Record summary
Structure probing data (2A3 and DMS) for a 177-nucleotide construct.
RNA sequence: GGGAACGACUCGAGUAGAGUCGAAAAACAGUCGUUACGACGACUGAACACUUUCAAAAAGCAAAAAGUUGCAAUAUCGGUAUACGACGUUACGUAGAUAUUGCACUAAUUUGCUUUUGAAAGUGAAGCUAUUCCUCAUUUUCGAAUGAGGAAUAGCAAAAGAAACAACAACAACAAC
Reactivity to 2A3 in 0.01 (KOAc 150mM, MgCl2 10mM, bicine 150mM(pH8.5), 24C), signal-to-noise 9, nucleotides 027 to 126: a000c010a000g000u000c010g010u030u060a120c300g030a000c000g000a000c060u000g010a050a010c000a000c000u010u000u000c010a050a040a010a010a010g000c000a010a010a010a010a010g120u210u040g000c000a000a000u000a000u000c030g060g070u150a090u030a150c160g100a080c140g170u190u160a040c020g010u040a020g000a000u000a000u000u000g000c000a000c000u010a000a000u010u000u000g000c000u010u000u000u000g000a000a000a000g000u000g010a020a010
Reactivity to DMS in 0.01 (KOAc 150mM, MgCl2 10mM, bicine 150mM(pH8.5), 24C), signal-to-noise 4, nucleotides 027 to 126: a160c000a010g010u000c000g020u000u010a110c190g030a050c010g020a020c000u000g000a080a230c020a010c000u000u000u000c010a010a010a020a040a020g010c010a020a000a020a160a030g010u020u010g010c000a000a010u010a000u000c000g000g020u010a100u040a000c020g020a200c230g010u030u060a050c030g030u020a110g000a010u000a000u000u000g000c000a010c010u010a030a090u000u000u000g010c000u000u000u000u000g000a010a030a010g030u000g020a070a070

2A3 is a SHAPE reagent: it acylates the 2'-hydroxyl of flexible nucleotides of all four kinds. DMS adducts were read by reverse transcription with MarathonRT.